[RMDB]
Source: RMDB library OK2TRN, as collected in RNAgym. Chemical mapping of a 177-nucleotide RNA with 2A3 and DMS. 2A3 adducts were read by reverse transcription with SuperScript II with manganese. Reactivities are given for positions 27 through 126. The reactions ran in a buffer of 150 mM KOAc, 10 mM MgCl2 and 150 mM bicine (pH 8.5), at 24 C.

RNA sequence: GGGAACGACUCGAGUAGAGUCGAAAAACACAAAUAAAUGCAAGGAGAGAAGAUUUAUUAUCACGAUUCUCAGUCUUCAUAAAGUUAAAACUUUGUACGGUGCCUUGCUUUGCAACACCUUGAGGAACGUAGAAUGUACGUUCGCGUACAUUCUACGAAAAGAAACAACAACAACAAC
Reactivity to 2A3 in 0.01 (KOAc 150mM, MgCl2 10mM, bicine 150mM(pH8.5), 24C), signal-to-noise 3, nucleotides 027 to 126: a000c040a000c020a060a160a030u170a060a110a030u110g000c000a000a000g060g020a050g030a000g000a100a000g000a030u010u080u100a090u110u100a070u100c040a010c170g110a080u110u000c010u000c010a020g040u020c010u010u010c020a060u030a060a020a020g020u030u160a060a200a120a120c020u050u040u050g050u060a060c100g060g110u130g040c010c030u000u040g000c010u060u000u080g000c030a010a040c020a050c040c000u040u080g080a110g100g050a090a040
Reactivity to DMS in 0.01 (KOAc 150mM, MgCl2 10mM, bicine 150mM(pH8.5), 24C), signal-to-noise 3, nucleotides 027 to 126: a100c090a100c150a070a080a080u020a050a040a030u010g000c020a020a020g000g000a090g010a120g000a040a020g000a040u000u010u000a060u020u000a060u010c110a160c220g000a150u000u000c030u000c020a050g000u000c000u000u000c020a070u000a020a000a000g010u000u000a100a080a070a150c010u000u000u000g000u000a110c270g000g000u000g020c030c040u000u010g010c000u000u020u000g020c090a040a040c050a080c120c050u000u000g010a080g010g010a070a140